[RMDB]
RNA sequence: GGGAACGACUCGAGUAGAGUCGAAAAUCUACCACCUUACUACUGAAGAAGACACCAUUCCAGUGGACCACUGUGACCUAAGAAGCAUUCAGCCAUCAUGAUGUGGCCUUUACCUCCACUCCUGUCCCAAAUGAGGCACCUUCGGGUGCCUCAUUUGAAAAGAAACAACAACAACAAC
Reactivity to 2A3 in 0.01 (KOAc 150mM, MgCl2 10mM, bicine 150mM(pH8.5), 24C), signal-to-noise 2, nucleotides 027 to 126: u030c000u010a030c000c000a030c000c000u070u050a070c070u010a000c000u040g050a050a060g040a040a010g050a060c020a010c000c010a030u080u050c000c000a030g060u030g020g030a010c000c010a030c060u070g070u110g020a020c000c000u030a120a130g040a080a020g110c030a030u040u040c000a010g010c030c000a010u080c050a070u120g110a130u120g000u060g050g000c000c000u050u050u130a020c010c000u000c010c010a020c000u000c020c040u070g000u090c020c010
Reactivity to DMS in 0.01 (KOAc 150mM, MgCl2 10mM, bicine 150mM(pH8.5), 24C), signal-to-noise 1, nucleotides 027 to 126: u070c010u000a030c030c020a160c000c060u020u040a070c130u000a000c010u040g000a150a100g000a150a060g030a130c000a050c150c050a110u000u030c090c030a160g090u000g000g020a080c250c130a030c070u070g060u030g000a070c000c000u010a180a080g020a060a100g050c060a040u000u000c040a200g010c110c000a030u000c040a000u030g000a210u000g030u000g030g010c070c010u000u060u000a030c000c000u000c060c010a000c000u000c040c030u040g010u020c000c000